[RMDB]
Structure probing data (DMS and 2A3) for a 177-nucleotide construct. 2A3 is a SHAPE reagent: it acylates the 2'-hydroxyl of flexible nucleotides of all four kinds.
RNA sequence: GGGAACGACUCGAGUAGAGUCGAAAAAGCCUCAAGCAGGGAUCUGCGUGCUCACUGUUCUCUUGCCAAGACACGGAGUGGACAGUAACUCGCCUUUACACGGGCGUUGGUAUCAGUUCUUGCUUCGCGGAGACCAUAGGUUCGCCUAUGGUCUCCGAAAAGAAACAACAACAACAAC
Reactivity to DMS in 0.01 (KOAc 150mM, MgCl2 10mM, bicine 150mM(pH8.5), 24C), signal-to-noise 2, nucleotides 027 to 126: a070g040c010c020u010c080a000a070g030c020a020g000g000g010a030u020c050u000g000c280g010u010g000c040u000c210a020c030u000g020u000u000c000u010c020u000u010g000c010c060a100a050g000a220c140a110c140g000g000a020g000u030g000g000a000c000a000g020u000a120a300c110u010c010g000c030c000u000u010u050a110c300a100c250g030g000g000c020g000u020u000g000g020u010a040u000c020a010g000u000u000c000u000u000g020c020u000u020c120g000
Reactivity to 2A3 in 0.01 (KOAc 150mM, MgCl2 10mM, bicine 150mM(pH8.5), 24C), signal-to-noise 5, nucleotides 027 to 126: a000g060c000c000u030c010a000a020g000c010a010g010g010g040a040u090c020u030g030c060g090u010g010c020u030c030a020c020u010g010u040u000c030u000c000u060u160g130c020c010a190a070g150a140c040a040c160g020g000a010g020u020g020g010a000c000a000g020u020a030a040c010u020c030g020c000c000u080u130u130a130c140a050c100g000g010g000c020g000u050u060g010g010u030a030u050c010a010g010u010u010c010u000u030g010c000u010u050c060g020

DMS adducts were read by reverse transcription with MarathonRT.